[RMDB]
RNA sequence: GGGAACGACUCGAGUAGAGUCGAAAAAGCUAGCAGUCGUACGCGACUGCUAGCAUUGUCUCUGGGAUGCUCGCCAGCGAGUCAGAAUCCCCUGAGCCGAUACUAUCACUUUAGGAUAGCGUUCUGCAUAUUUAGAGUGUAUGCCUACCCAGAGUAGGAAACCCAGCAAGUAUGCGUCGCUUCCACCUUGAACUUAAGGGUUCAAGGGUAAUGACAGGCAGCGGCAUCUUCGGAGGCAUUACGCUCGAGUAUACGUACUCGAGCGAAGAGGGUAGUUCGCUACCCUCAAAAGAAACAACAACAACAAC
Reactivity to 2A3 in 0.01 (KOAc 150mM, MgCl2 10mM, bicine 150mM(pH8.5), 24C), signal-to-noise 5, nucleotides 027 to 266: a000g000c000u000a000g020c000a000g000u020c010g040u070a050c270g010c010g150a000c000u000g000c000u000a000g000c000a000u000u020g000u000c000u000c000u000g010g010g000a000u020g030c170u240c220g020c020c020a090g020c030g070a040g030u000c010a000g030a080a160u170c000c000c000c000u000g000a000g020c000c010g060a070u090a190c060u130a130u250c070a080c100u140u180u190a080g020g010a060u080a070g010c010g070u140u040c080u270g010c010a000u040a020u030u050u060a140g060a050g100u170g010u040a050u300g040c000c010u030a030c010c010c060a050g050a090g090u010a010g000g020a010a010a000c040c030c000a040g080c040a060a040g020u000a000u000g000c000g000u000c000g010c010u020u000c010c010a020c010c010u030u090g030a050a070c020u100u140a160a130g160g000g000u010u000c010a030a020g000g010g000u030a050a060u020g010a000c020a020g130g060c000a000g000c000g000g000c000a010u010c000u150u040c010g010g000a000g010g000c000a000u020u170a030c010g010c000u000c000g010a000g000u010a040u030a070c140g010u000a010c000u000c000g000a000g000c000g000a040a050
Reactivity to DMS in 0.01 (KOAc 150mM, MgCl2 10mM, bicine 150mM(pH8.5), 24C), signal-to-noise 4, nucleotides 027 to 266: a130g000c010u010a000g010c000a010g000u000c000g050u010a090c160g020c040g020a010c000u000g020c000u000a010g000c000a010u010u000g010u000c000u000c000u010g000g000g010a000u000g000c010u040c020g040c010c050a300g000c010g020a200g010u010c010a030g010a300a170u000c020c000c000c080u000g000a020g010c010c010g010a120u010a080c200u010a090u010c020a050c170u000u010u010a150g010g010a050u030a010g000c000g000u010u010c020u040g040c000a020u000a000u000u000u000a090g010a250g050u010g010u010a020u010g000c000c000u000a020c000c000c190a180g000a160g010u010a010g000g000a010a040a010c010c030c040a090g030c200a040a020g010u010a000u010g000c000g000u000c010g010c000u000u000c020c020a100c100c030u010u000g000a030a140c150u010u000a100a110g010g000g000u000u000c000a000a030g000g010g010u010a040a160u010g000a020c030a020g000g010c030a300g000c010g000g000c000a010u010c020u000u020c020g010g000a030g000g000c010a000u010u020a080c020g000c000u010c000g010a030g010u010a050u010a090c150g020u010a010c000u000c000g000a000g010c000g010a030a060